Structure probing data (DMS) for a 177-nucleotide construct. The data come from the RNA Mapping Database (RMDB), library TTRDEL. Conditions: 150 mM KOAc, 10 mM MgCl2 and 150 mM bicine (pH 8.5), 24 C.
[RMDB]
RNA sequence: GGGAACGACUCGAGUAGAGUCGAAAAGAUAUGGAGACCAUCGAUCUAGAACUACAUGUAUCGGAAACGAUAUGCAUGCUAGGGAGGUCUCCUAAGUCAAACAAAACCCCCUUCGGGGGGUUUUGAACUUGUAUGGUAACUUCGGUUACCAUACAAGAAAAGAAACAACAACAACAAC
Reactivity to DMS in 0.01 (KOAc 150mM, MgCl2 10mM, bicine 150mM(pH8.5), 24C), signal-to-noise 1, nucleotides 027 to 126: g010a050u000a300u000g000g000a010g030a000c000c000a150u020c170g030a070u020c010u000a010g030a130a090c060u000a230c000a020u010g020u000a020u030c000g000g000a100a120a140c000g010a010u000a070u000g010c040a000u000g010c030u000a010g020g000g030a010g040g020u010c000u000c000c000u000a020a030g000u010c020a220a080a300c010a000a000a000a000c000c000c000c000c000u000u000c250g000g130g020g010g000g000u000u030u020u000g020a080a150